[RMDB]
RNA sequence: GGGAACGACUCGAGUAGAGUCGAAAACGGUCCGCUUAGCACGGAGUCCGAGAGUGGCAGAGCUCCGUAAAUUCGGAGUUCGCUAUUCGACCACAUGCUCGGAAGGAGGAGAUCAUGGCCGGGCCGGGUGGCAUUACGGAUUCGUCCGUAAUGCCACAAAAGAAACAACAACAACAAC
Reactivity to 2A3 in 0.01 (KOAc 150mM, MgCl2 10mM, bicine 150mM(pH8.5), 24C), signal-to-noise 5, nucleotides 027 to 126: c010g000g010u000c000c000g020c070u080u170a060g000c060a020c070g060g050a100g080u000c010c000g010a020g000a010g010u010g010g010c020a020g000a000g000c000u020c010c000g040u030a020a070a160u180u070c000g000g000a000g000u000u000c000g000c000u080a120u060u190c080g050a160c000c000a020c010a040u300g040c000u000c000g000g010a030a010g060g050a090g030g060a130g020a040u120c020a110u160g030g020c110c010g010g010g020c000c000g010g020
Reactivity to DMS in 0.01 (KOAc 150mM, MgCl2 10mM, bicine 150mM(pH8.5), 24C), signal-to-noise 2, nucleotides 027 to 126: c000g020g060u000c020c000g000c070u000u000a130g030c170a120c010g000g000a150g000u020c000c000g000a040g000a100g030u000g010g000c020a060g010a040g030c000u000c000c010g000u000a160a110a270u050u130c030g000g000a020g000u000u000c020g000c300u000a080u020u000c270g030a160c000c000a020c000a030u010g020c000u000c000g020g000a000a030g000g050a250g000g010a160g000a070u060c110a090u000g010g000c100c030g000g000g030c010c000g000g050